[RMDB]
RNA sequence: GGGAACGACUCGAGUAGAGUCGAAAAUUCACGUCCUAAGUUAUAAGGCUUGUGGAGACAGCUAUUAUCAGAUAAGGGAGACCUGACCUUGCCACCUUCGAGGUCUGUCGCCCGUUCAAAUAGCAGGUCCCAAGGAAGCAUUCGUGCUUCCUUGGGAAAAAGAAACAACAACAACAAC
Reactivity to 2A3 in 0.01 (KOAc 150mM, MgCl2 10mM, bicine 150mM(pH8.5), 24C), signal-to-noise 1, nucleotides 027 to 126: u070u010c030a020c020g030u000c000c010u040a030a030g050u000u210a210u030a300a000g080g070c090u180u130g090u090g100g000a000g020a040c100a030g000c020u010a030u070u030a070u100c140a070g030a050u030a140a240g000g010g020a010g000a000c000c130u020g000a010c000c000u030u020g170c090c050a150c060c100u130u300c040g000a000g000g000u090c010u000g000u010c020g000c030c000c010g000u000u000c030a030a030a000u010a000g040c040a030g060g190
Reactivity to DMS in 0.01 (KOAc 150mM, MgCl2 10mM, bicine 150mM(pH8.5), 24C), signal-to-noise 2, nucleotides 027 to 126: u000u000c030a060c090g000u020c000c020u000a050a160g010u020u010a120u020a110a070g000g020c080u030u000g000u000g010g020a100g000a050c160a110g000c000u010a010u000u010a150u000c160a060g000a040u000a050a150g000g030g000a020g000a020c010c200u010g020a000c010c020u000u070g000c250c190a040c260c170u020u020c050g000a030g000g000u010c000u000g000u000c000g020c010c010c000g000u000u000c040a080a060a010u000a000g000c020a150g010g000
Record summary:
The record gives the reactivity of an RNA of 177 nucleotides to 2A3 and DMS. High DMS reactivity at an A or C suggests that its Watson-Crick edge is free. It was measured as part of the RMDB library OK2TRN. For DMS, 999 sequencing reads were counted. The RNA was probed in 150 mM KOAc, 10 mM MgCl2 and 150 mM bicine (pH 8.5) at 24 C. 2A3 adducts were read by reverse transcription with SuperScript II with manganese.